The record gives the reactivity of an RNA of 207 nucleotides to 2A3 and DMS. Values cover nucleotides 27 to 156. The DMS profile rests on 2,086 reads. It was measured as part of the RMDB library RNAMAK. The RNA was probed in 150 mM KOAc, 10 mM MgCl2 and 150 mM bicine (pH 8.5) at 24 C.

[RMDB]
RNA sequence: GGGAACGACUCGAGUAGAGUCGAAAAGGGGUCAGGGACAUGACAACGUCAUUUCGAAGAACGUACUGAAGCCUCCACGGUACGGGAGAAAUGUUAUGGUGUCAACAGCCCUGACGGAGGCACCCAAAACUACUGAGUGGUUCGCCACUCAGUAGAACAUAGCUACUCACUUCGGUGAGUAGCUAUGAAAAGAAACAACAACAACAAC
Reactivity to 2A3 in 0.01 (KOAc 150mM, MgCl2 10mM, bicine 150mM(pH8.5), 24C), signal-to-noise 4, nucleotides 027 to 156: g050g030g060g010u020c010a010g030g010g010a030c190a300u300g010a010c010a100a010c010g010u000c000a020u010u000u000c060g050a120a010g010a010a010c010g010u000a000c000u020g030a110a030g000c000c000u000c010c000a010c000g010g000u000a000c000g010g010g010a010g000a000a010a000u020g010u110u150a070u090g070g020u000g000u020c030a090a030c030a180g010c010c000c000u000g000a000c000g010g000a000g000g000c000a020c000c000c010a030a070a010a060c010u010a010c000u000g000a000g020u000g030g030u040u130c240g060c070c000a000c000u000c000a000g000u000a000g000a000a000
Reactivity to DMS in 0.01 (KOAc 150mM, MgCl2 10mM, bicine 150mM(pH8.5), 24C), signal-to-noise 1, nucleotides 027 to 156: g000g040g050g030u010c000a040g010g020g020a060c060a270u000g000a030c000a030a050c030g010u030c010a080u000u000u030c010g000a090a240g020a190a300c060g010u010a030c000u000g000a030a170g000c000c030u000c000c010a200c000g040g030u010a000c010g000g010g010a070g000a010a030a000u000g000u000u000a040u000g000g010u000g030u000c010a050a070c120a070g000c000c000c000u000g020a000c010g000g030a020g090g040c010a180c030c010c050a140a100a160a110c030u000a010c000u000g010a040g040u010g010g000u000u000c300g040c000c010a020c000u000c010a000g020u010a000g000a090a160